[RMDB]
RNA sequence: GGGAACGACUCGAGUAGAGUCGAAAAGGGGUCGAGCGAGCGACCGACCAGGCUCGAAGAACAUACUGAAGCCUCCACGGUAUGGGAGAGCCUGGGUCGCGAUGAGCUCGACGGAGGCACCCAAAGCCAAUAAGAUGCUUCGGCAUCUUAUUGGCAAUCUAUGAACCGGAUUCGUCCGGUUCAUAGAAAAAGAAACAACAACAACAAC
Reactivity to 2A3 in 0.01 (KOAc 150mM, MgCl2 10mM, bicine 150mM(pH8.5), 24C), signal-to-noise 1, nucleotides 027 to 156: g030g010g060g000u000c000g010a000g010c000g010a020g010c000g020a010c060c030g020a110c000c040a010g000g060c000u000c020g050a040a020g000a000a000c010a000u010a010c010u070g040a150a010g000c000c000u030c000c010a000c000g000g000u010a010u010g020g030g000a020g000a000g010c020c000u000g000g000g000u000c000g000c000g060a230u140g010a010g000c010u000c010g000a000c000g000g000a010g000g000c000a050c020c010c020a070a040a000g000c000c000a000a000u000a000a000g000a000u010g020c000u080u190c300g060g000c030a000u000c000u000u000a000u000u000g000g030c000a000a000
The data come from the RNA Mapping Database (RMDB), library RNAMAK. An RNA of 207 nucleotides, treated with 2A3 and read out base by base. Reactivities are given for positions 27 through 156.